About this RNA:
An RNA of 177 nucleotides, treated with 2A3 and DMS and read out base by base. 2A3 adducts were read by reverse transcription with SuperScript II with manganese. For 2A3, 22,066 sequencing reads were counted. Source: RMDB library OK2TRN, as collected in RNAgym.

[RMDB]
RNA sequence: GGGAACGACUCGAGUAGAGUCGAAAAGACUGCUCGGUGGGCACGCCGUCGAGUUGACACCGGAUCCAGCCUUCGGGGUCGGAGGCCAACCGUAGUGCCGCGGAUCCUCGCUGUGCGCCGCCCGCGGCCUUCAGUCUAGGUUCGCCUAGACUGAAGGAAAAGAAACAACAACAACAAC
Reactivity to 2A3 in 0.01 (KOAc 150mM, MgCl2 10mM, bicine 150mM(pH8.5), 24C), signal-to-noise 9, nucleotides 027 to 126: g030a030c030u050g010c010u050c060g050g010u040g000g020g000c060a030c070g050c040c010g060u070c020g020a070g090u080u150g070a030c040a040c040c030g010g010a030u040c040c030a010g010c030c000u030u040c020g060g000g110g130u180c050g080g070a080g020g000c020c020a080a100c020c010g070u090a050g040u050g120c030c020g060c090g050g000a040u030c020c010u010c030g020c040u100g070u120g060c050g050c050c060g010c010c000c000g020c010g020g020
Reactivity to DMS in 0.01 (KOAc 150mM, MgCl2 10mM, bicine 150mM(pH8.5), 24C), signal-to-noise 9, nucleotides 027 to 126: g010a120c060u000g010c030u000c050g020g030u000g010g000g020c100a120c080g010c040c050g020u000c030g000a060g000u000u010g000a080c080a120c080c030g010g000a060u010c100c110a200g010c020c020u000u000c020g010g010g010g010u000c030g010g000a050g010g000c020c070a050a110c030c030g010u010a070g000u000g020c020c030g020c100g000g000a130u000c080c030u000c050g020c050u010g020u010g010c040g020c050c060g010c110c010c030g010c030g000g000